About this RNA
This 177-nucleotide RNA was probed chemically with DMS and 2A3.
[RMDB]
RNA sequence: GGGAACGACUCGAGUAGAGUCGAAAACUCUGACGCUUCGGCGUCAGAGAAACCUCUAAGCAGAUUGGCGAGGACGACGCUGCGCAGCGCGUUUGCCAACAAAAACGCAUAGAUUCGUCUAUGCGAAGGCAAGUAAGAAGUUCGCUUCUUACUUGCCAAAAGAAACAACAACAACAAC
Reactivity to DMS in 0.01 (KOAc 150mM, MgCl2 10mM, bicine 150mM(pH8.5), 24C), signal-to-noise 2, nucleotides 027 to 126: c010u000c000u000g010a010c020g040c000u000u010c150g030g040c000g030u000c000a010g010a000g000a020a090a110c040c000u010c160u010a100a060g020c230a050g000a150u000u000g000g020c010g000a110g010g000a050c010g010a060c020g000c000u000g000c230g030c160a020g060c020g010c000g020u000u000u000g050c010c000a020a000c070a020a070a010a070a150c000g000c000a020u000a000g000a060u010u000c150g020u000c000u000a010u000g010c000g030a040a020
Reactivity to 2A3 in 0.01 (KOAc 150mM, MgCl2 10mM, bicine 150mM(pH8.5), 24C), signal-to-noise 3, nucleotides 027 to 126: c000u010c000u000g010a000c010g010c040u060u070c200g140g020c030g000u020c000a000g000a000g000a010a000a000c000c000u010c090u130a130a130g080c080a030g050a300u030u000g020g000c010g030a070g140g070a050c030g060a100c000g010c020u130g080c190g030c230a010g000c020g010c000g010u010u020u060g000c010c000a000a010c020a010a060a010a000a000c000g000c000a000u000a010g010a040u030u030c180g020u000c060u000a000u010g020c000g010a030a010

The 2A3 profile rests on 2,644 reads.
For DMS, 1,180 sequencing reads were counted.
The reactions ran in a buffer of 150 mM KOAc, 10 mM MgCl2 and 150 mM bicine (pH 8.5), at 24 C.
For 2A3 the reverse transcriptase was SuperScript II with manganese.
As a SHAPE reagent, 2A3 marks flexible, mostly unpaired nucleotides at the ribose 2'-OH.